[RMDB]
RNA sequence: GGGAACGACUCGAGUAGAGUCGAAAAUCAAUCUAGUUCGCUAGAUUGAAAAGGGCGAUGAGGCCCGCGCAAACUGCCCUGAAAAGGGCUGAUGGCCUCAAAAAAUCCGUCGGUUCGCCGACGGAAAGUUACGAGAAUACUUCGGUAUUCUCGUAACAAAAGAAACAACAACAACAAC
Reactivity to DMS in 0.01 (KOAc 150mM, MgCl2 10mM, bicine 150mM(pH8.5), 24C), signal-to-noise 2, nucleotides 027 to 126: u000c000a000a000u000c000u000a010g010u020u020c200g030c010u000a000g010a000u000u000g000a000a090a130a210g010g000g030c010g010a160u000g010a010g040g000c020c000c000g040c040g010c130a070a060a200c070u000g000c000c000c000u000g000a090a040a170a030g000g000g050c000u000g010a080u000g000g000c010c010u010c010a000a020a080a110a050a090u000c000c000g030u000c000g010g000u000u000c200g030c000c000g010a020c000g000g000a000a000a070